[RMDB]
RNA sequence: GGGAACGACUCGAGUAGAGUCGAAAAAAGAAAGUGCAGUGUUAGUAACUGACAGAGCCAGAAAUGGAUCCCAAGCACUUGGUUCCAGAGCUUGCAUUCUGAAGCACCCUGCUGUGAUGUGCUGUCUUGAUGAAUGAAUCAAUGAGGUUUUGGACUAGCUCAUCAAAAUAUUCGUAUUUUGAUGAGCAAAAGAAACAACAACAACAAC
Reactivity to DMS in 0.01 (KOAc 150mM, MgCl2 10mM, bicine 150mM(pH8.5), 24C), signal-to-noise 4, nucleotides 027 to 156: a070a090g010a080a050a070g010u010g030c030a150g030u000g010u000u010a140g000u010a080a090c050u010g020a130c050a050g010a060g000c010c010a060g010a070a100a170u020g020g020a090u000c000c010c050a110a150g000c040a050c040u000u000g020g010u000u000c020c010a080g000a060g000c020u000u000g010c060a100u000u010c040u000g010a110a100g020c010a070c030c020c050u000g020c050u010g020u010g020a080u000g030u000g020c020u000g000u000c060u000u010g010a080u000g000a090a100u000g010a130a080u000c050a040a060u010g010a170g020g010u000u000u000u010g000g010a070c210u000a160
Reactivity to 2A3 in 0.01 (KOAc 150mM, MgCl2 10mM, bicine 150mM(pH8.5), 24C), signal-to-noise 4, nucleotides 027 to 156: a010a020g120a050a030a010g030u050g050c020a010g010u000g050u130u180a080g040u120a140a070c040u020g070a040c010a030g110a030g040c000c020a020g020a020a060a020u090g010g030a040u040c030c020c000a030a020g060c050a020c050u040u070g040g010u130u030c020c020a010g000a010g080c040u040u080g030c020a060u110u030c030u120g040a080a010g020c010a010c020c020c020u060g070c050u050g070u060g100a110u080g030u020g030c010u020g090u090c030u060u070g040a050u040g040a130a030u070g040a040a040u090c080a090a080u170g040a060g070g010u030u040u070u050g020g010a020c020u050a010
Source: RMDB library OK3TST, as collected in RNAgym.
Structure probing data (DMS and 2A3) for a 207-nucleotide construct.
2A3 is a SHAPE reagent: it acylates the 2'-hydroxyl of flexible nucleotides of all four kinds.
For DMS, 11,789 sequencing reads were counted.
Conditions: 150 mM KOAc, 10 mM MgCl2 and 150 mM bicine (pH 8.5), 24 C.